[RMDB]
RNA sequence: GGGAACGACUCGAGUAGAGUCGAAAAUAAAUGAGCGUACAGCACACUCAGACUGUACGCUAUCUGACUGUGUCAACUUCAAAGUCCAACGACACACACAAGGCGUUGGAACAAGAGUGUGAGAAAAAGUAACUUUCUUAUUCGUAAGAAAGUUACUAAAAGAAACAACAACAACAAC
Reactivity to DMS in 0.01 (KOAc 150mM, MgCl2 10mM, bicine 150mM(pH8.5), 24C), signal-to-noise 9, nucleotides 027 to 126: u010a070a100a100u010g000a030g010c000g010u000a010c010a020g010c080a070c080a100c090u010c060a110g000a140c010u000g000u000a000c000g010c010u000a010u000c060u000g010a080c090u010g020u010g000u010c050a080a100c060u000u000c070a050a150a180g000u000c010c000a010a020c020g010a050c030a080c110a090c250a120c300a100a070g000g010c020g010u000u000g000g000a020a030c070a060a180g000a020g000u000g010u000g000a080g000a060a050a060a060
Reactivity to 2A3 in 0.01 (KOAc 150mM, MgCl2 10mM, bicine 150mM(pH8.5), 24C), signal-to-noise 9, nucleotides 027 to 126: u240a010a090a100u200g050a010g000c000g000u000a000c000a000g010c050a020c010a030c100u090c020a040g060a270c020u000g000u000a000c000g000c000u000a020u030c020u050g060a050c020u070g050u060g040u290c030a060a040c040u140u070c080a100a080a050g030u000c010c000a010a000c010g090a050c010a020c010a010c010a010c020a240a090g070g000c010g000u010u010g010g030a030a010c010a040a010g020a010g020u060g050u040g040a060g100a040a120a010a000